[RMDB]
RNA sequence: GGGAACGACUCGAGUAGAGUCGAAAAGAUAUGGAUCCUGAGGCUUUUGACGCUAUACACUUUCUCGCUCCAUCGGAAACGAUGGAACGAGAAAGUGUAUAGCGAUAAGCCUCUGGAUCCUAAGUCAGAUGUAUCUAUCGUUCGCGAUAGAUACAUCAAAAGAAACAACAACAACAAC
Reactivity to DMS in 0.01 (KOAc 150mM, MgCl2 10mM, bicine 150mM(pH8.5), 24C), signal-to-noise 1, nucleotides 027 to 126: g010a020u020a300u000g010g000a000u000c000c030u000g040a030g020g000c000u000u000u000u000g020a290c160g030c000u000a000u010a000c000a000c010u000u000u010c000u000c000g030c000u000c000c000a000u000c010g000g000a200a120a240c000g040a010u010g000g000a020a010c000g020a010g000a000a030a000g010u000g010u000a000u000a000g010c010g020a020u000a010a020g030c000c010u000c000u000g010g000a010u000c000c000u000a000a090g010u000c070a140